Chemical mapping of a 177-nucleotide RNA with 2A3 and DMS. For DMS the reverse transcriptase was MarathonRT. The reactions ran in a buffer of 150 mM KOAc, 10 mM MgCl2 and 150 mM bicine (pH 8.5), at 24 C. In probing experiments dimethyl sulfate is read out at A N1 and C N3, which are open when not base-paired.
RNA sequence: GGGAACGACUCGAGUAGAGUCGAAAAAGGCAUGUCAAGAAGGCCAGGAGAAGCAUGGCGAAACUGGCCAGCUGGGGCGAGUUUCGCUGCAAAUACACUGGCGGCUGGACGCCAGUCAGUAGCAACACGACUAGGUUAUAUUCGUAUAACCUAGUCGAAAAGAAACAACAACAACAAC
Reactivity to 2A3 in 0.01 (KOAc 150mM, MgCl2 10mM, bicine 150mM(pH8.5), 24C), signal-to-noise 9, nucleotides 027 to 126: a010g060g000c060a070u140g020u130c040a030a060g060a050a040g160g000c020c020a020g040g080a120g020a080a020g030c090a080u200g040g000c010g010a000a010a010c020u060g150g000c080c020a020g000c040u150g100g040g010g030c030g030a010g000u000u010u020c010g000c000u010g000c010a040a040a010u160a030c070a000c030u000g000g000c000g010g010c030u070g040g020a040c030g010c020c000a000g020u020c020a020g030u060a030g040c030a030a060c040a020
Reactivity to DMS in 0.01 (KOAc 150mM, MgCl2 10mM, bicine 150mM(pH8.5), 24C), signal-to-noise 9, nucleotides 027 to 126: a070g010g010c030a050u010g010u000c060a080a080g010a100a090g010g010c010c020a060g000g000a110g010a170a100g010c070a110u010g010g010c000g000a020a010a010c010u000g000g010c000c010a100g010c150u010g010g000g020g010c010g000a020g010u000u000u000c010g020c010u000g010c070a030a070a110u000a070c120a090c000u000g000g010c000g010g000c080u000g000g000a090c040g010c010c010a060g010u000c070a060g010u000a070g010c070a060a070c140a220